[RMDB]
RNA sequence: GGGAACGACUCGAGUAGAGUCGAAAACGCGAUGGAUACGUCCAUCGCGAAUGCGUCCUAGCCGCGGACGUUAAACUGUGGCACGGUUGUGCCUAGGUGCAACCCUGCUACUAAUGGCGGUACCCCUGCCCAAGCUACCGUCUACGGACGGUAGCAAUCCCCUACUCCUAUUCGUAGGAGUAGGGGAAAAAGAAACAACAACAACAAC
Reactivity to 2A3 in 0.01 (KOAc 150mM, MgCl2 10mM, bicine 150mM(pH8.5), 24C), signal-to-noise 1, nucleotides 027 to 156: c030g000c000g000a000u000g000g040a040u050a050c210g140u020c010c000a000u000c000g050c000g000a000a000u120g050c010g000u010c000c020u040a110g040c010c030g000c010g000g000a000c030g000u010u000a010a070a030c180u100g010u010g040g000c000a000c050g000g000u000u000g010u010g040c040c040u080a210g080g080u020g010c000a000a000c000c000c000u000g060c000u060a020c010u040a060a260u110g010g000c030g020g000u170a160c030c030c000c020u040g080c020c050c050a040a010g010c000u000a000c000c000g000u030c000u000a020c180g120g000a000c000g000g000u000a000g000c000a000a000